[RMDB]
RNA sequence: GGGAACGACUCGAGUAGAGUCGAAAAGGGCUUGACGCAUCGCCCGAAUAUGAUGCAUGUGCUUUUGCACUAAGAUAAAUGUCCGUAUCGUAGGGGACUUAGAACCUACUCAUUAAUGUCCGAAGAGUCUGGGACGAUCAUCAGGCUAGACUAAGAAGCUAGGGAUAUAGUUCGCUAUAUCCCUAGCAAAAGAAACAACAACAACAAC
Reactivity to DMS in 0.01 (KOAc 150mM, MgCl2 10mM, bicine 150mM(pH8.5), 24C), signal-to-noise 1, nucleotides 027 to 156: g020g010g000c030u000u010g010a070c100g020c140a020u010c020g000c020c000c050g010a070a040u010a040u010g010a050u000g020c030a170u050g030u000g000c030u020u020u000u010g070c000a060c030u010a170a070g010a090u000a030a100a120u010g020u000c080c030g000u000a100u000c060g000u000a050g010g010g010g010a100c100u020u000a140g000a130a100c020c050u000a050c010u000c040a100u010u000a090a180u010g020u020c000c000g000a070a160g000a200g030u000c040u000g000g030g020a060c000g000a060u000c040a020u000c000a060g010g030c010u000a040g010a120c090u010a060a110g020a100a260
Reactivity to 2A3 in 0.01 (KOAc 150mM, MgCl2 10mM, bicine 150mM(pH8.5), 24C), signal-to-noise 2, nucleotides 027 to 156: g030g000g010c040u060u080g060a010c040g010c080a030u030c000g010c000c000c000g000a020a010u200a080u140g020a010u010g000c010a040u020g000u010g010c020u130u150u150u300g000c000a010c030u070a010a060g060a130u050a040a190a090u090g000u020c030c040g040u020a200u210c000g000u010a050g000g030g000g040a020c010u080u090a010g060a010a000c010c010u030a050c010u030c010a040u000u160a100a040u150g050u000c030c000g020a120a070g010a050g090u020c000u010g000g010g030a100c010g050a120u170c020a020u000c000a040g010g030c010u040a000g030a100c050u120a130a020g040a150a010